[RMDB]
RNA sequence: GGGAACGACUCGAGUAGAGUCGAAAAAUUUCGAGCGUAAUCGCGUCUUGACUAGACUGUAGGUGACGUGAGUAGGGAUCUAUCCCAGUGUGCUUAGCGCACAAUACGCUGAUCUACAGUCAUUUAAGAAGGCAAUCUGAUUCGUCAGAUUGCCUUCAAAAGAAACAACAACAACAAC
Reactivity to 2A3 in 0.01 (KOAc 150mM, MgCl2 10mM, bicine 150mM(pH8.5), 24C), signal-to-noise 2, nucleotides 027 to 126: a000u130u150u080c010g010a030g010c010g030u080a080a170u090c020g000c010g040u000c000u060u110g040a030c030u040a080g000a020c000u000g020u000a000g000g050u050g060a010c040g020u000g030a040g040u070a100g000g000g020a050u100c060u180a140u150c100c000c010a020g060u020g010u010g020c050u080u190a080g010c030g000c040a000c000a000a010u110a000c000g000c040u060g020a020u000c000u010a000c000a000g000u000c000a020u030u060u030a070a030
Reactivity to DMS in 0.01 (KOAc 150mM, MgCl2 10mM, bicine 150mM(pH8.5), 24C), signal-to-noise 2, nucleotides 027 to 126: a100u000u000u000c030g020a010g020c030g010u000a080a100u010c060g020c100g020u020c010u000u020g010a160c230u010a100g020a030c020u000g030u000a010g000g000u000g000a060c030g010u000g000a080g000u000a100g030g000g010a050u000c250u000a090u010c000c000c000a210g020u010g020u000g000c020u000u000a100g030c120g010c030a010c000a080a080u000a070c000g000c050u000g000a050u000c010u000a030c000a000g000u010c020a080u010u010u000a040a090